[RMDB]
RNA sequence: GGGAACGACUCGAGUAGAGUCGAAAAGCUAGCUACGGCCGCGAUUACGAUCGGCCGGCGCCGCGAUAUAUUAUAUAGCUACGUAGCAUAUUAGCUAAUGCCGUAGCCGAUGCGCGCAUAUCGGCCGGCCGUUACGAGGUUUCGACCUCGUAACGGCAAAAGAAACAACAACAACAAC
Reactivity to 2A3 in 0.01 (KOAc 150mM, MgCl2 10mM, bicine 150mM(pH8.5), 24C), signal-to-noise 1, nucleotides 027 to 126: g030c000u030a020g000c020u050a010c020g080g000c000c000g000c000g010a080u020u190a060c050g040a040u100c030g020g000c020c000g000g020c020g000c000c000g010c000g010a010u040a000u010a040u300u080a110u070a040u060a140g010c000u010a010c060g100u080a040g000c040a020u050a110u150u160a040g070c050u090a060a000u090g030c070c000g000u050a010g010c010c000g060a050u140g050c070g000c000g000c060a010u050a070u190c040g000g000c000c000g050
Reactivity to DMS in 0.01 (KOAc 150mM, MgCl2 10mM, bicine 150mM(pH8.5), 24C), signal-to-noise 2, nucleotides 027 to 126: g040c040u000a030g010c030u000a120c040g010g010c010c050g010c040g020a140u010u010a070c180g010a080u010c020g000g020c010c000g030g020c080g000c080c120g010c020g010a090u000a090u010a080u010u000a120u000a080u000a080g010c010u000a070c070g020u000a110g010c010a050u000a090u020u000a080g020c080u020a090a030u000g000c000c040g010u000a030g010c000c050g000a030u010g010c070g040c040g010c080a050u030a060u030c010g000g040c000c070g040